[RMDB]
Record summary
Chemical mapping of a 177-nucleotide RNA with 2A3 and DMS. For DMS the reverse transcriptase was MarathonRT. The 2A3 profile rests on 702 reads. Conditions: 150 mM KOAc, 10 mM MgCl2 and 150 mM bicine (pH 8.5), 24 C.
RNA sequence: GGGAACGACUCGAGUAGAGUCGAAAAACGGUUGUUCAUGCUCUACUGCAUGAAAUUGGAGAGCGUCUCAAACAAGAGUUCCCAGAAGAGCCGUGGAGACCUGGUAUCAUCCAUAGAUUGGACAAAGAUGGUUCAAAAGUUUCGACUUUUGAACCAUAAAAGAAACAACAACAACAAC
Reactivity to 2A3 in 0.01 (KOAc 150mM, MgCl2 10mM, bicine 150mM(pH8.5), 24C), signal-to-noise 1, nucleotides 027 to 126: a000c000g020g020u040u070g100u040u020c000a000u010g010c010u030c040u190a180c070u110g000c000a010u020g000a020a050a030u100u130g120g060a120g020a010g060c040g100u030c020u040c000a170a250a100c060a030a030g020a010g060u000u020c020c000c010a020g050a040a030g020a010g000c030c010g060u010g040g060a070g000a020c020c000u020g010g020u120a090u160c020a030u000c050c000a030u040a110g240a110u080u120g080g010a020c040a020a090a150g160
Reactivity to DMS in 0.01 (KOAc 150mM, MgCl2 10mM, bicine 150mM(pH8.5), 24C), signal-to-noise 3, nucleotides 027 to 126: a100c050g000g000u000u000g010u010u000c010a010u000g000c030u000c300u010a110c160u000g000c060a040u000g010a030a030a070u000u000g000g000a140g000a060g010c030g000u000c010u000c030a060a070a160c160a080a080g010a300g000u000u010c010c000c020a170g010a130a060g010a090g010c030c020g000u000g010g000a030g000a090c020c050u000g000g000u000a080u000c100a140u000c020c020a040u000a070g000a110u010u000g000g010a100c200a050a120a140g010